Chemical mapping of a 177-nucleotide RNA with 2A3 and DMS. For DMS the reverse transcriptase was MarathonRT. In probing experiments dimethyl sulfate is read out at A N1 and C N3, which are open when not base-paired. Reactivities are given for positions 27 through 126.
RNA sequence: GGGAACGACUCGAGUAGAGUCGAAAAGAAAGAAAGAAAUACAAGUGAAGCUGAAGAGAGCCGUCUAUUGACAGUUCGCUUGUUUCAUGUGCUGUCAUGGAGUCGCUCUCUUCAGAUGAUCUGAAAACUGAGCUUAACAUUUCGAUGUUAAGCUCAGAAAAGAAACAACAACAACAAC
Reactivity to 2A3 in 0.01 (KOAc 150mM, MgCl2 10mM, bicine 150mM(pH8.5), 24C), signal-to-noise 7, nucleotides 027 to 126: g080a020a050a000g160a060a080a010g130a060a060a010u180a060c120a140a010g010u010g020a030a000g030c000u000g020a010a000g000a000g010a000g020c030c070g180u000c020u040a110u060u100g010a000c000a000g010u090u120c070g040c110u190u180g100u170u270u180c080a070u230g000u030g000c000u000g000u000c000a000u010g050g020a050g030u130c040g000c010u000c000u010c000u010u000c000a000g000a000u000g000a010u000c000u010g000a000a040a010a020
Reactivity to DMS in 0.01 (KOAc 150mM, MgCl2 10mM, bicine 150mM(pH8.5), 24C), signal-to-noise 4, nucleotides 027 to 126: g020a130a080a090g000a120a100a100g010a050a070a040u010a070c170a100a040g020u000g000a230a180g000c000u000g000a030a010g010a010g010a010g010c040c300g000u000c000u030a040u030u040g000a010c000a000g010u010u010c030g020c140u020u020g000u030u000u020c100a080u000g010u000g010c020u000g010u010c010a010u000g010g020a090g000u040c300g000c000u000c000u000c000u000u000c000a000g000a010u000g000a120u000c000u000g000a050a070a060a090